Conditions: 150 mM KOAc, 10 mM MgCl2 and 150 mM bicine (pH 8.5), 24 C.
The record gives the reactivity of an RNA of 207 nucleotides to DMS and 2A3.
It was measured as part of the RMDB library OK3TST.
[RMDB]
RNA sequence: GGGAACGACUCGAGUAGAGUCGAAAACAAUAAUGAAUUUUUCUGAGCGGGUAAUGGACUCUCGUAAUGCAAUUGGGAAAAUGAAAAGGGCAUGUAAACGAUAUGUCAUGGCUUAGCGUAAGUUUGAACCCAAGGGAGCAGACACGAAGGGAACGUGCAAUCACGACAACUUCGGUUGUCGUGAUUGAAAAGAAACAACAACAACAAC
Reactivity to DMS in 0.01 (KOAc 150mM, MgCl2 10mM, bicine 150mM(pH8.5), 24C), signal-to-noise 1, nucleotides 027 to 156: c050a080a150u000a130a030u020g010a180a110u000u010u010u010u000c010u030g020a120g100c000g000g030g010u010a080a080u000g050g000a090c040u000c050u000c030g030u000a110a130u000g000c070a060a190u000u000g020g020g030a030a010a000a100u000g000a090a000a150a180g000g000g030c030a030u020g080u000a030a090a180c110g060a200u020a120u020g000u030c010a120u010g010g000c030u020u000a130g030c150g010u000a100a150g040u010u010u000g010a060a150c010c000c060a030a130g020g000g010a050g080c020a200g000a230c010a040c050g000a110a080g050g000g000a040a050c060g020u000g000
Reactivity to 2A3 in 0.01 (KOAc 150mM, MgCl2 10mM, bicine 150mM(pH8.5), 24C), signal-to-noise 2, nucleotides 027 to 156: c030a040a010u240a110a100u110g120a070a190u010u100u060u090u070c070u160g000a000g010c000g020g050g070u180a140a090u080g050g050a070c010u060c000u000c050g040u120a030a050u050g050c010a020a060u080u040g050g040g000a050a040a030a040u090g060a040a090a080a110g000g020g000c020a000u020g050u100a120a180a040c040g020a050u060a030u200g030u050c000a010u070g100g010c060u040u020a030g010c010g050u020a020a020g000u010u100u140g080a070a050c020c030c000a030a040g080g020g020a070g000c030a010g020a030c050a000c050g040a060a010g030g040g000a000a030c020g000u020g010